[RMDB]
RNA sequence: GGGAACGACUCGAGUAGAGUCGAAAAAAGUGAUUAUUCGUAAUCACUUCACGCCGGGCGCGGUGGCGCGUGCCUGUAGUGCCAGCUACUCGGGAGGCUAAACGACGUACCCGUUCGCGGGUACGAACACUGCGUCUAGGUUCGCCUAGACGCAGUGAAAAGAAACAACAACAACAAC
Reactivity to 2A3 in 0.01 (KOAc 150mM, MgCl2 10mM, bicine 150mM(pH8.5), 24C), signal-to-noise 1, nucleotides 027 to 126: a000a000g020u020g020a040u010u040a000u050u130c220g070u060a000a020u000c010a000c000u020u020c050a030c010g040c030c000g020g020g030c010g000c010g080g000u030g030g080c050g000c010g060u040g000c000c020u040g030u060a060g000u020g100c020c010a040g000c010u010a020c000u000c040g000g020g010a000g030g030c060u040a150a120a030c070g140a010c010g000u000a010c020c010c010g000u040u020c280g000c000g040g000g020u000a000c000g000a010a000
Reactivity to DMS in 0.01 (KOAc 150mM, MgCl2 10mM, bicine 150mM(pH8.5), 24C), signal-to-noise 1, nucleotides 027 to 126: a000a020g030u000g010a020u000u000a000u010u020c210g020u000a030a000u000c000a000c000u000u000c030a050c090g000c070c020g010g010g000c010g040c010g020g010u000g050g000c080g020c020g020u000g000c010c010u000g000u000a070g020u000g000c050c090a140g000c040u000a020c040u000c070g000g000g000a120g010g000c070u000a000a140a090c110g010a210c000g000u000a000c000c000c010g020u010u000c180g020c010g000g000g000u010a000c000g010a070a140